[RMDB]
RNA sequence: GGGAACGACUCGAGUAGAGUCGAAAAGCUCCGGCGCCAGAGGAUGUGGCUGCGGCCGAUUAGGUAGACGGUGGGGUAACGGCCCACCGUGCCAGUAAUCGGUACGGGUUGUGAGAGCAAGAGCCCGUCCAAUUUUCUGUUUCGACAGAAAAUUGGAAAAAGAAACAACAACAACAAC
Reactivity to DMS in 0.01 (KOAc 150mM, MgCl2 10mM, bicine 150mM(pH8.5), 24C), signal-to-noise 3, nucleotides 027 to 126: g000c010u030c000c020g010g020c030g000c020c020a090g030a160g020g000a110u020g010u020g000g010c010u010g040c050g020g000c000c010g010a020u000u010a060g000g020u000a160g000a080c020g020g010u000g000g010g000g010u000a100a200c300g010g010c000c000c000a010c000c000g050u000g000c020c020a090g020u020a040a010u000c010g000g020u000a040c050g000g000g020u000u000g020u000g000a170g020a080g000c050a110a140g000a100g010c000c000c010g010
Reactivity to 2A3 in 0.01 (KOAc 150mM, MgCl2 10mM, bicine 150mM(pH8.5), 24C), signal-to-noise 2, nucleotides 027 to 126: g020c000u000c000c010g040g000c030g000c000c010a050g010a050g220g060a130u140g060u050g070g060c080u100g080c010g010g000c000c000g010a020u010u020a000g040g000u040a040g020a070c000g010g020u000g000g000g000g010u020a070a020c000g070g030c010c010c000a000c000c000g000u000g000c000c000a030g140u090a000a020u010c010g000g020u050a150c030g000g010g000u030u050g030u030g050a110g010a040g030c060a120a020g070a050g150c000c000c000g020